[RMDB]
Source information:
The record gives the reactivity of an RNA of 177 nucleotides to DMS and 2A3. For DMS, 2,123 sequencing reads were counted. The RNA was probed in 150 mM KOAc, 10 mM MgCl2 and 150 mM bicine (pH 8.5) at 24 C.
RNA sequence: GGGAACGACUCGAGUAGAGUCGAAAACAUGUGUACUUCGGUACACAUGAAAUGACCGCCAUUAUUGGCUAAGGCUACUCGGACGGCCGGGUCAAAUGCCGAAAAUCGUUGCGUUCGCGCAACGAAAGUACAAAACAGACUUCGGUCUGUUUUGUACAAAAGAAACAACAACAACAAC
Reactivity to DMS in 0.01 (KOAc 150mM, MgCl2 10mM, bicine 150mM(pH8.5), 24C), signal-to-noise 2, nucleotides 027 to 126: c010a010u000g000u000g000u000a000c000u000u010c170g050g010u000a000c000a000c000a010u000g000a020a100a120u020g000a010c010c010g070c000c000a060u000u010a140u010u000g000g020c010u000a070a000g000g020c000u000a070c200u000c020g000g000a040c020g000g000c010c010g010g000g020u000c010a040a050a030u020g010c030c010g000a130a100a110a140u000c000g010u000u000g000c010g030u000u020c230g000c010g010c000a010a000c000g000a000a000a050
Reactivity to 2A3 in 0.01 (KOAc 150mM, MgCl2 10mM, bicine 150mM(pH8.5), 24C), signal-to-noise 3, nucleotides 027 to 126: c000a010u000g010u000g000u010a000c010u020u030c190g090g000u000a000c000a000c000a010u020g000a020a010a000u100g000a000c020c010g050c020c000a110u160u180a200u300u300g030g000c100u140a250a110g020g000c000u010a060c080u060c040g020g050a040c020g020g010c020c000g010g000g010u020c010a000a000a040u070g000c000c010g000a100a010a000a020u030c000g000u000u000g010c000g020u010u040c240g000c000g000c040a000a000c000g000a000a010a000